RNA sequence: GGGAACGACUCGAGUAGAGUCGAAAAACUGCAUCUACGGAUGCAGAACUACGUUCAUCCAAUUAAUUUGGACGCAUGAAAUGAGAAUAGGGAACGGGAUUCUCAUACGCAGGCUACGGCCUGCGAAAAAACUCCUUAUGCUUCGGCAUAAGGAGAACGGGUUAAAAUGGUUCGCCAUUUUAACCCGAAAAGAAACAACAACAACAAC
Reactivity to 2A3 in 0.01 (KOAc 150mM, MgCl2 10mM, bicine 150mM(pH8.5), 24C), signal-to-noise 1, nucleotides 027 to 156: a000c000u000g000c000a000u000c030u060a010c210g180g000a010u000g000c000a000g010a010a000c010u030a030c010g000u000u000c010a000u010c000c010a070a030u110u300a050a100u040u110u050g000g010a000c000g030c010a030u180g080a080a090a000u010g010a040g000a030a000u010a060g000g030g030a010a010c000g000g000g030a010u000u000c000u000c000a000u030a040c030g000c030a000g000g000c020u030a080c300g130g030c020c000u000g010c000g000a030a000a000a000a000a000c010u000c000c000u000u000a000u000g000c000u060u080c230g040g000c000a000u000a000a010g030g000a000g000a000a010